[RMDB]
RNA sequence: GGGAACGACUCGAGUAGAGUCGAAAAGAUAUGGACCGUGUAGGCUAGCUGAUUCGGAAACGAACCAGCUUGGACCCUACCCGGUCCUAAGUCAAAAGGCUGAUUGAGGUUCGCCUCAAUCAGCCAACGUACAUACUCUGUUCGCAGAGUAUGUACGAAAAGAAACAACAACAACAAC
Reactivity to 2A3 in 0.01 (KOAc 150mM, MgCl2 10mM, bicine 150mM(pH8.5), 24C), signal-to-noise 3, nucleotides 027 to 126: g000a000u010a000u040g000g000a000c000c010g000u000g010u010a020g030g090c140u040a000g000c010u010g000a040u000u020c000g000g010a020a020a000c000g000a010a010c020c010a000g010c010u010u090g040g050a180c000c000c020u000a000c010c000c000g000g000u000c000c000u000a000a000g010u000c000a000a040a060a140g010g000c000u010g000a000u000u000g010a000g050g040u110u190c300g150c030c000u000c000a000a000u000c010a000g000c000c000a000a000
Reactivity to DMS in 0.01 (KOAc 150mM, MgCl2 10mM, bicine 150mM(pH8.5), 24C), signal-to-noise 4, nucleotides 027 to 126: g000a020u000a040u010g000g000a020c000c000g000u000g000u000a010g010g010c040u000a010g010c000u010g000a030u000u000c000g020g000a010a010a020c000g010a010a010c010c000a000g000c000u000u020g020g020a130c250c000c000u000a000c000c040c000g000g010u000c000c000u000a000a040g000u000c000a090a120a130a130g000g000c000u010g010a010u000u010g010a020g000g010u000u010c290g000c010c000u000c000a000a000u000c000a010g010c000c000a010a010